[RMDB]
RNA sequence: GGGAACGACUCGAGUAGAGUCGAAAAUGGUUCUGAAAAGUCUUGCGCUCCUAUAGUCGUUCGGACCGCCUUCUAUGCUCGCGUCUUUCGAGGGGUACGUCGCCACUGGCCGCUGAAAAGUGGUGUGCCUAUACUUACUGUUCGCAGUAAGUAUAGGAAAAGAAACAACAACAACAAC
Reactivity to DMS in 0.01 (KOAc 150mM, MgCl2 10mM, bicine 150mM(pH8.5), 24C), signal-to-noise 8, nucleotides 027 to 126: u010g010g010u000u010c030u010g000a070a080a100a140g000u000c020u000u000g010c060g010c050u000c030c030u000a100u000a060g010u000c030g010u000u000c040g010g000a100c070c040g010c060c020u000u000c060u000a090u010g000c020u000c040g010c100g010u000c040u000u000u000c050g010a100g010g000g010g010u000a070c110g000u000c050g010c020c020a060c070u000g000g010c030c030g020c040u000g000a050a050a110a050g020u000g000g010u000g010u000g010
Reactivity to 2A3 in 0.01 (KOAc 150mM, MgCl2 10mM, bicine 150mM(pH8.5), 24C), signal-to-noise 7, nucleotides 027 to 126: u090g030g010u080u050c030u050g050a060a050a050a040g050u030c020u040u070g020c040g000c020u050c010c000u070a060u070a130g050u040c020g030u050u040c010g030g040a040c010c020g030c020c000u060u020c040u060a080u110g020c010u020c020g020c010g060u020c000u010u070u040c040g020a050g010g020g020g010u040a040c040g040u020c020g010c010c000a030c010u020g080g000c020c010g010c050u030g040a030a050a020a020g030u030g000g030u040g040u040g050